[RMDB]
RNA sequence: GGGAACGACUCGAGUAGAGUCGAAAAUGAGUGGGGGAGGAUGUUACGGACAAAUUCCGUAACCGUGUGAGGCCAACAUCAAAGAUGCGUACCUAGCUGCGUUUCAACCUGCGUGGGUUGAGGCGGCUUAGCGGAUUAGGGCGUUCUGCCCCAGUGGCUAUAAUUGUACGUUCGCGUACAAUUAUAGAAAAGAAACAACAACAACAAC
Reactivity to 2A3 in 0.01 (KOAc 150mM, MgCl2 10mM, bicine 150mM(pH8.5), 24C), signal-to-noise 7, nucleotides 027 to 156: u260g030a060g090u080g000g010g020g000g010a020g020g000a050u080g010u010u010a000c010g000g020a020c120a140a220a130u220u010c010c000g000u000a010a000c010c020g040u090g060u070g110a040g010g050c040c010a050a050c010a060u100c060a100a080a030g070a040u120g070c020g020u120a300c010c030u020a010g010c020u030g010c010g030u020u070u020c010a010a010c000c010u160g110c190g180u300g030g000g000u000u000g000a010g000g020c000g010g000c020u030u070a010g000c010g040g020a040u070u140a040g030g030g000c020g020u060u010c020u090g020c020c010c000c010a040g030u090g090g000
Reactivity to DMS in 0.01 (KOAc 150mM, MgCl2 10mM, bicine 150mM(pH8.5), 24C), signal-to-noise 3, nucleotides 027 to 156: u000g010a090g020u010g000g010g020g040g020a120g020g000a110u000g010u000u000a020c010g020g020a100c030a130a090a230u020u010c010c000g010u000a010a030c010c140g020u020g000u000g000a130g000g030c040c050a090a070c010a030u000c060a110a100a160g020a090u000g000c040g020u000a080c020c020u000a090g030c010u000g010c020g020u000u000u000c000a000a010c000c000u010g040c300g030u010g020g000g020u000u010g010a020g010g010c000g000g000c060u000u000a040g020c040g000g010a180u000u000a080g000g010g020c020g010u000u000c050u000g000c020c000c000c000a040g010u000g000g020
An RNA of 207 nucleotides, treated with 2A3 and DMS and read out base by base. For DMS, 11,915 sequencing reads were counted. Conditions: 150 mM KOAc, 10 mM MgCl2 and 150 mM bicine (pH 8.5), 24 C. Values cover nucleotides 27 to 156.